Chemical mapping of a 207-nucleotide RNA with 2A3.
Conditions: 150 mM KOAc, 10 mM MgCl2 and 150 mM bicine (pH 8.5), 24 C.
It was measured as part of the RMDB library OK3TST.
2A3 adducts were read by reverse transcription with SuperScript II with manganese.

[RMDB]
RNA sequence: GGGAACGACUCGAGUAGAGUCGAAAACAGUUUAAAGUGGUAAGCAGCCUUUUCUGUCUCCUUUGUCUAGAUUCUUGCUCACUUGUGGCAUCUGGGCUACUCACCAGAAGAUAUCAUUGGCAACAUCUUUCGAGUGUGUAAAACUUUCCAAAUGGCACAUUGCUGCAUGCUUCGGCAUGCAGCAAUGAAAAGAAACAACAACAACAAC
Reactivity to 2A3 in 0.01 (KOAc 150mM, MgCl2 10mM, bicine 150mM(pH8.5), 24C), signal-to-noise 2, nucleotides 027 to 156: c040a030g020u040u110u180a120a200a000g090u090g030g010u040a020a090g110c040a040g030c050c010u050u090u080u080c060u040g040u000c030u030c080c000u050u160u140g060u000c030u050a070g020a110u080u030c010u040u190g020c020u030c040a160c070u120u150g040u080g080g000c010a030u000c120u070g000g070g020c010u020a040c000u040c030a050c030c000a010g060a070a050g000a040u060a010u140c090a070u040u200g020g000c000a050a020c000a060u010c040u040u100u170c110g000a050g020u060g000u010g030u090a020a020a030a030c000u010u020u000c080c040a080a110a090u060g020g020c050a000